Notes
Chemical mapping of a 177-nucleotide RNA with DMS and 2A3. The DMS profile rests on 2,180 reads. DMS adducts were read by reverse transcription with MarathonRT. For 2A3 the reverse transcriptase was SuperScript II with manganese. Source: RMDB library OK1LIB, as collected in RNAgym.
RNA sequence: GGGAACGACUCGAGUAGAGUCGAAAAGCAUGAGCAAGUAACAAGAGUGAAGGUUAUAGAUUUAGCUUACGCCGAUGCGCUAGGGAGUGACCUGGCUUUUAAAAUCCUCCGUAGCCAAUAUAAAAAGUCCUGAUCAGCAAUUCGUUGCUGAUCAGGAAAAAGAAACAACAACAACAAC
Reactivity to DMS in 0.01 (KOAc 150mM, MgCl2 10mM, bicine 150mM(pH8.5), 24C), signal-to-noise 2, nucleotides 027 to 126: g000c030a080u000g000a070g000c020a030a040g000u000a010a090c110a010a130g010a170g010u000g040a080a070g000g000u000u000a060u000a130g000a160u020u130u000a060g020c000u000u010a070c040g000c020c030g000a080u020g000c150g040c000u020a010g000g000g000a060g010u060g010a010c010c030u020g010g000c060u000u000u000u010a010a060a100a110u030c020c000u000c050c020g000u000a000g000c000c080a030a070u080a080u050a140a090a020a080a090g000
Reactivity to 2A3 in 0.01 (KOAc 150mM, MgCl2 10mM, bicine 150mM(pH8.5), 24C), signal-to-noise 2, nucleotides 027 to 126: g020c040a090u150g040a000g020c000a030a050g050u250a100a000c000a060a070g190a000g070u010g070a110a030g130g000u000u000a060u020a050g280a160u120u050u160a060g030c040u040u010a030c020g000c030c060g120a060u070g020c070g000c110u000a040g000g010g000a100g000u150g030a000c000c050u020g000g000c000u160u290u000u060a030a010a000a000u000c000c000u040c040c060g040u000a000g030c000c000a000a150u110a040u000a110a040a070a060a000g040